[RMDB]
RNA sequence: GGGAACGACUCGAGUAGAGUCGAAAAGAUAUGGACCGUACUACCCACCUUCUAUACUUGGUCCCUUUGAUCUAAAUCGGAAACGAUUUAGGGAGGGACCGUAUAGAAGAGGUACGGUCCUAAGUCAGUUAUAUCCGUUGUUCGCAACGGAUAUAACAAAAGAAACAACAACAACAAC
Reactivity to DMS in 0.01 (KOAc 150mM, MgCl2 10mM, bicine 150mM(pH8.5), 24C), signal-to-noise 4, nucleotides 027 to 126: g020a230u010a130u000g000g010a030c000c000g010u000a010c010u000a160c020c020c030a300c100c010u000u000c000u000a010u000a000c020u010u030g040g010u000c000c010c000u000u000u020g000a050u010c010u000a000a000a000u000c010g000g000a120a130a300c000g020a000u000u000u000a010g000g010g010a020g010g020g000a010c000c000g000u000a000u000a010g000a020a000g010a030g010g000u000a000c010g010g020u000c000c000u000a000a070g010u020c200a100
Reactivity to 2A3 in 0.01 (KOAc 150mM, MgCl2 10mM, bicine 150mM(pH8.5), 24C), signal-to-noise 4, nucleotides 027 to 126: g170a090u300a200u300g010g000a000c000c010g040u010a020c000u230a250c020c020c020a010c020c000u010u000c020u010a010u010a040c040u150u300g020g000u070c020c000c000u300u300u070g050a070u000c000u010a000a000a020u020c000g030g050a150a010a040c020g020a010u030u010u010a010g000g000g010a020g000g000g010a000c000c010g010u010a000u000a000g010a000a000g000a000g010g010u010a000c000g020g020u010c000c000u000a000a000g040u030c160a020

This 177-nucleotide RNA was probed chemically with DMS and 2A3.
For DMS the reverse transcriptase was MarathonRT.
The RNA was probed in 150 mM KOAc, 10 mM MgCl2 and 150 mM bicine (pH 8.5) at 24 C.
2A3 adducts were read by reverse transcription with SuperScript II with manganese.